[RMDB]
RNA sequence: GGGAACGACUCGAGUAGAGUCGAAAAAAUCUUUCUAGAAUCUUCCCUCAGCCCCUCGGGCACAGGGAUGGGAAUGGAACAGGCAGUCAGCUGUGGGCAGCUUCAGGGAGUCUGAAGUCACUGCUGUUGAAGGGCUGAGCUCCAGAGGGGAAACGCACAUCGGUAAAUAGUUCGCUAUUUACCGAUGAAAAGAAACAACAACAACAAC
Reactivity to 2A3 in 0.01 (KOAc 150mM, MgCl2 10mM, bicine 150mM(pH8.5), 24C), signal-to-noise 3, nucleotides 027 to 156: a000a000u140c100u090u250u060c110u130a100g040a150a130u010c010u020u020c010c010c000u020c050a060g000c020c010c000c030u050c040g000g000g050c030a040c060a020g050g020g040a030u110g060g010g060a050a070u140g020g030a130a010c030a080g060g030c020a030g010u100c020a010g000c070u070g020u060g020g060g020c040a040g020c020u020u000c010a050g050g050g070a120g200u080c000u000g010a010a000g040u030c030a000c070u010g000c020u030g040u090u080g070a040a020g000g020g000c050u040g030a030g010c020u060c040c020a070g010a020g020g010g000g070a060a020a060c090g010c060a030
Reactivity to DMS in 0.01 (KOAc 150mM, MgCl2 10mM, bicine 150mM(pH8.5), 24C), signal-to-noise 2, nucleotides 027 to 156: a080a040u010c010u000u010u010c030u000a190g020a170a070u000c060u010u000c000c020c000u000c070a200g000c000c000c000c020u000c080g000g010g050c110a060c050a070g040g010g000a160u000g000g010g010a090a100u000g010g000a050a050c060a300g020g030c040a120g000u000c030a050g040c030u000g000u000g000g020g010c050a120g010c010u000u010c000a030g010g010g000a150g030u010c030u000g000a030a030g010u000c070a090c040u010g010c020u010g000u000u010g020a060a070g000g000g000c010u000g000a090g010c050u000c010c030a090g000a110g020g010g040g000a080a060a100c090g030c100a180
Structure probing data (2A3 and DMS) for a 207-nucleotide construct. The DMS profile rests on 3,306 reads. The reactions ran in a buffer of 150 mM KOAc, 10 mM MgCl2 and 150 mM bicine (pH 8.5), at 24 C.